[RMDB]
RNA sequence: GGGAACGACUCGAGUAGAGUCGAAAACCCCUGAUCUGGAGAGCACUCCGGCCCGAAGGGUUGAGUAGCACCCAGAGGGAGGAAAUCACACGGAGAGAAACAGACAAAUCACCUCCAGAGGACCCCUAAGCACGUGUCUUCGGACACGUGAAAAGAAACAACAACAACAAC
Reactivity to 2A3 in 0.01 (KOAc 150mM, MgCl2 10mM, bicine 150mM(pH8.5), 24C), signal-to-noise 7, nucleotides 027 to 129: c020c000c000c030u050g070a080u020c000u000g000g000a030g010a010g030c050a020c040u010c020c000g060g020c010c000c000g040a080a070g020g000g010u020u060g040a100g070u250a030g080c040a000c010c010c000a000g010a030g080g000g030a030g010g070a040a130a100u200c040a070c020a010c080g010g010a000g000a010g030a020a120a020c090a020g200a020c060a020a080a010u060c020a030c030c020u010c000c000a010g000a000g010g030a020c000c000c000c000u040a060a030g100
Reactivity to DMS in 0.01 (KOAc 150mM, MgCl2 10mM, bicine 150mM(pH8.5), 24C), signal-to-noise 8, nucleotides 027 to 129: c050c010c010c180u000g040a030u000c030u000g020g040a050g020a080g000c080a160c050u020c020c030g000g020c020c000c010g010a300a130g010g030g010u020u050g000a090g000u030a060g010c100a090c020c010c020a000g000a300g000g040g030a120g060g020a070a100a120u100c110a030c110a100c070g000g000a040g020a130g020a010a150a000c170a080g050a020c160a090a080a000u050c140a150c050c020u010c000c030a070g010a060g000g010a090c000c000c000c000u020a120a170g000
Notes:
This 170-nucleotide RNA was probed chemically with 2A3 and DMS. The DMS profile rests on 18,346 reads. Values are in units of 0.01, from 0 to 300, in steps of 10. The data come from the RNA Mapping Database (RMDB), library 15KLIB.